Chemical mapping of a 207-nucleotide RNA with 2A3. It was measured as part of the RMDB library OK3TST. The reactions ran in a buffer of 150 mM KOAc, 10 mM MgCl2 and 150 mM bicine (pH 8.5), at 24 C.
RNA sequence: GGGAACGACUCGAGUAGAGUCGAAAAGUUGCACUUGGAAGGAUGAAGUCCAAAAUGGUGUCUUGAAUGUGAUGAACCGUCUUAAUUUCUAUAGUUUUGGUCACAUUGCCGAAAACAUUGGCGCCAUUUUUGAAUCUCCUCCUGUAUACGUUGAGGACCAUUUUAAUGCGUUCGCGCAUUAAAAUGGAAAAGAAACAACAACAACAAC
Reactivity to 2A3 in 0.01 (KOAc 150mM, MgCl2 10mM, bicine 150mM(pH8.5), 24C), signal-to-noise 3, nucleotides 027 to 156: g030u030u020g030c060a040c080u120u130g040g000a130a050g010g020a040u270g020a130a040g100u000c010c030a000a000a000a000u000g020g000u000g020u040c010u040u120g090a110a030u050g020u010g000a010u010g000a020a020c020c010g060u020c080u040u180a200a230u160u260u060c120u160a160u080a130g050u010u060u080u210g040g000u020c020a010c000a100u000u050g030c030c030g190a120a080a050a010c070a100u050u060g000g000c010g000c000c000a000u000u000u000u000u000g000a010a020u020c000u020c010c000u010c000c010u020g030u010a150u020a050c080g010u000u020g020a050g020g060a020